[RMDB]
RNA sequence: GGGAACGACUCGAGUAGAGUCGAAAAGAGAAGUAAACUGUUAGUCGCCAGCGGCUUGACCCGCUGUGGCCGCGGCGGCCUAGUUGAGACUGAAACGGCGGGUAAGAGCUCGGAGAGACCGAGCAGAAUCCAUCCCGUACUUCGGUACGGGAUGGAUAAAAGAAACAACAACAACAAC
Reactivity to DMS in 0.01 (KOAc 150mM, MgCl2 10mM, bicine 150mM(pH8.5), 24C), signal-to-noise 1, nucleotides 027 to 126: g070a170g020a200a160g000u010a010a130a070c030u000g050u050u000a140g000u000c030g040c010c000a120g080c000g000g000c000u000u000g000a030c040c130c020g000c030u000g050u000g010g010c020c000g030c000g000g020c000g020g010c090c020u000a020g100u000u000g000a080g030a300c050u000g010a160a040a010c000g000g000c000g000g020g000u080a030a170g000a090g000c000u000c010g000g030a300g070a260g000a100c020c000g000a000g050c000a000g000a030
Reactivity to 2A3 in 0.01 (KOAc 150mM, MgCl2 10mM, bicine 150mM(pH8.5), 24C), signal-to-noise 2, nucleotides 027 to 126: g130a000g050a070a010g060u220a090a030a060c010u040g020u100u150a000g000u030c000g050c010c060a100g030c000g020g050c000u070u000g070a160c000c000c000g000c000u000g000u020g000g000c000c000g010c020g000g000c000g000g020c000c010u060a040g030u060u170g010a070g000a050c070u050g000a080a090a000c000g010g000c020g000g020g010u000a050a020g000a020g000c000u000c000g000g000a160g000a040g090a220c000c020g000a000g020c000a020g040a020